[RMDB]
RNA sequence: GGGAACGACUCGAGUAGAGUCGAAAAGGGAACUGCUGGGUUCCUCGGAUGUCGAUCCCCUCUCCCGUUCGGGAAAAGGGGGACUCCGGAACUCCCUGCAGGCUGGGGACGAAGCCCCCACCGGGCGUGACCCACGCGUUCGCGCGUGGGAAAAGAAACAACAACAACAAC
Reactivity to 2A3 in 0.01 (KOAc 150mM, MgCl2 10mM, bicine 150mM(pH8.5), 24C), signal-to-noise 5, nucleotides 027 to 129: g020g010g010a040a050c020u040g040c030u070g010g000g000u040u020c000c000u000c000g000g000a080u260g010u040c040g060a250u170c000c000c000c000u020c020u010c000c030c000g230u270u300c250g000g000g000a000a030a040a000g040g000g000g000g000a000c000u000c000c000g000g010a000a020c040u070c050c000c020u040g010c040a020g020g000c050u060g020g000g000g000a030c070g110a090a030g050c010c000c000c000c000a010c030c040g040g020g000c050g000u050g020a040

Notes:
Source: RMDB library 15KLIB, as collected in RNAgym. This 170-nucleotide RNA was probed chemically with 2A3. For 2A3, 7,825 sequencing reads were counted.